[RMDB]
RNA sequence: GGGAACGACUCGAGUAGAGUCGAAAAUCAAAAAUCUCUUAUCUCACAUUUUGGCCUUGGGGAGCACAUGGAGAGUGGACUCCCUGACAUUUUCAUCUUUUUGUCCCCUACAGCCUGAACAUAGGAUACCAGUGAUCAUUGUACACUUGUGAGUGUAACAUGCAUUGGGGUUCGCCCCAAUGCAUGUAAAAGAAACAACAACAACAAC
Reactivity to 2A3 in 0.01 (KOAc 150mM, MgCl2 10mM, bicine 150mM(pH8.5), 24C), signal-to-noise 1, nucleotides 027 to 156: u050c020a000a020a050a030a020u030c020u060c100u130u240a140u080c090u070c020a140c010a100u000u090u040u300g100g000c000c000u020u050g010g000g000g000a040g000c040a040c000a150u090g000g070a050g050a050g120u000g010g020a070c020u000c000c020c010u060g000a000c050a100u020u080u210u210c060a120u100c090u050u170u080u060u110g100u100c000c000c000c000u020a040c040a000g010c000c000u000g050a080a040c020a050u090a140g000g010a050u070a170c000c070a070g000u020g050a020u020c140a020u100u150g030u200a030c000a050c000u040u160g080u040g100a010g000u050g010u090a020

Background: The record gives the reactivity of an RNA of 207 nucleotides to 2A3. Conditions: 150 mM KOAc, 10 mM MgCl2 and 150 mM bicine (pH 8.5), 24 C. Values cover nucleotides 27 to 156. The data come from the RNA Mapping Database (RMDB), library OK3TST.